[RMDB]
RNA sequence: GGGAACGACUCGAGUAGAGUCGAAAAAGCACUGGUACGAUACGUCGUACCAGUGCAGUCGUUGGGAUGGAACGCAAUUAAAUACAUGUGUUACGUGUAUUUGCGAACGACGUAAUUAUUUUUCAAAAUCACGCUAUCGUGUUCGCACGAUAGCGAACACCAUUCCAAGGUUCGCCUUGGAAUGGUGAAAAGAAACAACAACAACAAC
Reactivity to 2A3 in 0.01 (KOAc 150mM, MgCl2 10mM, bicine 150mM(pH8.5), 24C), signal-to-noise 4, nucleotides 027 to 156: a000g000c020a010c010u000g010g030u000a020c010g010a010u010a030c230g090u010c000g010u010a000c010c000a010g000u000g010c010a000g000u000c010g020u030u070g100g080g080a210u150g080g080a140a050c020g000c020a030a040u180u090a140a100a010u040a000c010a000u020g050u060g110u240u300a040c030g000u010g000u000a000u000u000u010g000c010g020a020a020c010g020a000c040g050u060a030a100u130u120a120u050u080u030u030u070c110a110a040a030a070u150c060a050c100g000c000u010a000u010c000g010u000g030u080u040c080g020c100a000c010g000a000u010a000g000c010g010a000a000
Reactivity to DMS in 0.01 (KOAc 150mM, MgCl2 10mM, bicine 150mM(pH8.5), 24C), signal-to-noise 1, nucleotides 027 to 156: a060g000c010a010c000u000g010g000u020a020c000g000a090u020a120c300g070u000c030g020u000a040c000c000a050g010u010g000c000a020g000u000c030g020u000u000g000g000g030a200u020g000g000a080a140c000g050c000a090a170u000u000a080a050a000u000a020c010a020u000g000u000g030u000u000a040c040g040u000g030u000a000u000u000u000g000c090g010a040a180c000g000a130c050g000u010a040a070u000u000a210u000u000u000u000u000c060a050a040a100a130u000c070a140c000g000c000u000a030u010c000g030u000g000u000u000c250g000c050a000c030g000a040u000a030g040c000g040a000a050

Conditions: 150 mM KOAc, 10 mM MgCl2 and 150 mM bicine (pH 8.5), 24 C. Chemical mapping of a 207-nucleotide RNA with 2A3 and DMS. Reactivities are given for positions 27 through 156. It was measured as part of the RMDB library M2RFPK. For DMS, 2,582 sequencing reads were counted.